The record gives the reactivity of an RNA of 177 nucleotides to 2A3 and DMS. For DMS the reverse transcriptase was MarathonRT. Source: RMDB library 15KREP, as collected in RNAgym. Values cover nucleotides 27 to 126. Conditions: 150 mM KOAc, 10 mM MgCl2 and 150 mM bicine (pH 8.5), 24 C.
[RMDB]
RNA sequence: GGGAACGACUCGAGUAGAGUCGAAAACGCUUAAAGAGUUAUAUGGCCCCGUUGAUCCUACUUUCUUACACAGAUUCUAUUCACUUAAGGCUGCAGUCCAUGGGUGGAAGAUGGUUGUGUGUGAUAACAUCUAUGAGUACUUCGGUACUCAUAGAUGAAAAGAAACAACAACAACAAC
Reactivity to 2A3 in 0.01 (KOAc 150mM, MgCl2 10mM, bicine 150mM(pH8.5), 24C), signal-to-noise 2, nucleotides 027 to 126: c040g000c010u070u070a160a080a060g160a070g050u100u060a150u060a120u300g100g010c000c000c000c000g010u040u100g030a070u010c000c020u010a070c040u100u090u020c010u020u090a010c030a000c010a020g030a070u000u040c010u070a300u040u000c010a010c030u010u070a050a050g030g010c040u160g150c190a020g010u000c020c010a050u090g040g000g000u010g010g020a010a020g010a020u050g080g000u120u030g030u010g000u010g030u030g000a020u050a040a010
Reactivity to DMS in 0.01 (KOAc 150mM, MgCl2 10mM, bicine 150mM(pH8.5), 24C), signal-to-noise 4, nucleotides 027 to 126: c110g000c140u000u010a080a090a130g000a110g000u000u000a120u010a080u010g010g010c030c010c040c050g020u000u010g000a090u000c020c040u000a070c180u010u000u000c010u000u000a040c020a020c020a050g000a110u000u000c010u000a110u000u000c010a020c010u000u000a080a080g000g010c030u020g030c180a100g000u010c010c010a090u000g000g000g020u000g000g010a020a040g000a020u000g020g020u000u000g020u000g010u000g020u000g000a070u000a080a160